RNA sequence: GGGAACGACUCGAGUAGAGUCGAAAAUCAUGGGGCUGCGAAGCUUGCCCGAUAAUGACCGCUCAGCACGCAAGUUCGAUGUGGUCAGCGCCAUUCUGUGCGCCGUCACCUUUGGCCUGCUGAUUAAACCAGUUUUAAUCUUCGGAUUAAAACUGGUAAAAGAAACAACAACAACAAC
Reactivity to DMS in 0.01 (KOAc 150mM, MgCl2 10mM, bicine 150mM(pH8.5), 24C), signal-to-noise 5, nucleotides 027 to 126: u010c030a050u000g020g010g000g010c020u000g010c130g020a140a120g010c050u010u000g020c010c040c020g000a080u010a060a070u010g010a130c030c030g000c140u000c020a040g000c040a030c180g000c090a100a070g010u000u010c090g010a070u000g010u000g010g010u010c020a020g020c030g010c010c010a170u020u020c190u020g010u010g020c020g020c040c080g010u000c020a040c040c160u000u000u000g010g000c020c060u000g000c030u000g000a060u000u010a060a110
Reactivity to 2A3 in 0.01 (KOAc 150mM, MgCl2 10mM, bicine 150mM(pH8.5), 24C), signal-to-noise 4, nucleotides 027 to 126: u060c020a040u090g000g000g030g000c020u030g020c120g110a130a050g030c010u080u080g020c010c000c000g020a040u120a210a070u100g050a020c010c010g000c040u020c020a010g020c020a000c040g030c020a050a110g020u110u140c060g060a080u100g040u050g060g070u060c020a010g000c000g000c010c010a080u220u110c070u180g100u150g030c000g020c010c000g040u040c010a060c000c020u040u050u100g060g000c000c010u010g010c010u020g030a070u040u190a100a110
Source: RMDB library OK2TST, as collected in RNAgym.
This 177-nucleotide RNA was probed chemically with DMS and 2A3.
For 2A3, 6,627 sequencing reads were counted.